[RMDB]
RNA sequence: GGGAACGACUCGAGUAGAGUCGAAAAACCUUUGUGGUACUAAGCUAUGUUGUCAGAAAUGAUGGGACCCAUUGGGUCCCUACCAUUUCUUGGAUUUACAUAGCGAAGUACCACUCUGGUAAAGAUCUUCCGACGAGUUCGCUCGUCGGAAGAUCAACAAGCCUUAGUAGUUCGCUACUAAGGCUUGAAAAGAAACAACAACAACAAC
Reactivity to DMS in 0.01 (KOAc 150mM, MgCl2 10mM, bicine 150mM(pH8.5), 24C), signal-to-noise 1, nucleotides 027 to 156: a020c000c010u010u000u000g000u010g010g060u010a000c020u000a120a300g010c000u000a020u010g010u000u000g050u000c030a120g000a030a030a000u000g020a040u010g010g030g010a000c010c010c010a300u000u010g110g040g040u000c000c000c000u000a000c000c010a000u000u010u000c000u000u020g040g010a040u000u000u000a010c000a010u000a020g010c010g010a260a050g000u000a020c000c010a000c000u000c010u000g010g030u000a050a090a230g000a030u000c030u000u000c010c000g000a020c010g020a040g000u010u000c300g000c040u000c000g040u000c020g030g020a020a000g000a000u000c010a010a160
Reactivity to 2A3 in 0.01 (KOAc 150mM, MgCl2 10mM, bicine 150mM(pH8.5), 24C), signal-to-noise 3, nucleotides 027 to 156: a000c010c000u040u020u010g000u010g000g020u000a000c000u030a000a050g010c000u000a000u010g010u020u000g010u010c010a000g020a000a010a000u010g000a000u030g000g000g000a000c000c010c170a300u120u300g050g000g000u000c010c010c000u000a030c000c010a000u000u000u010c010u010u120g070g010a030u300u210u060a000c000a000u000a000g000c000g000a000a000g000u000a000c000c000a000c000u000c000u000g000g010u040a120a110a090g010a000u000c000u010u000c000c000g000a000c000g000a000g060u120u120c220g150c140u000c000g000u000c010g000g000a000a000g000a000u000c000a010a000